[RMDB]
RNA sequence: GGGAACGACUCGAGUAGAGUCGAAAAGGCCGGUGGGAACUCGAUGGGCCGACAACGACAUGUUCGGCCACCUCAACAACGCCGUCUACUACCAGCUGUUUGACACCGCGAUAAACGCCUGGAUCAAGCACAAUGGAAUCUUCGGAUUCCAUUGUGCAAAAGAAACAACAACAACAAC
Reactivity to 2A3 in 0.01 (KOAc 150mM, MgCl2 10mM, bicine 150mM(pH8.5), 24C), signal-to-noise 5, nucleotides 027 to 126: g050g000c040c040g000g030u050g030g060g060a080a030c040u020c090g110a170u100g040g060g000c000c000g010a000c000a110a020c040g270a070c040a130u110g060u110u080c000g000g000c010c010a110c000c020u060c000a060a080c010a050a050c060g000c030c000g050u040c020u060a080c030u040a020c010c020a030g030c020u040g060u070u030u060g040a020c020a020c040c000g000c010g040a030u090a140a110a020c040g030c020c060u060g000g010a040u100c090a100a040
Reactivity to DMS in 0.01 (KOAc 150mM, MgCl2 10mM, bicine 150mM(pH8.5), 24C), signal-to-noise 2, nucleotides 027 to 126: g020g010c060c000g000g000u000g000g010g000a070a090c160u010c030g010a060u020g000g020g000c000c040g060a010c060a080a110c260g000a120c230a070u020g000u040u010c050g000g010c000c040a010c070c130u020c250a060a060c150a080a110c170g010c010c010g060u000c020u040a110c040u040a060c030c010a060g010c010u100g010u040u010u000g000a080c000a120c000c000g020c070g060a060u080a200a030a110c070g000c090c010u040g020g000a140u000c090a070a130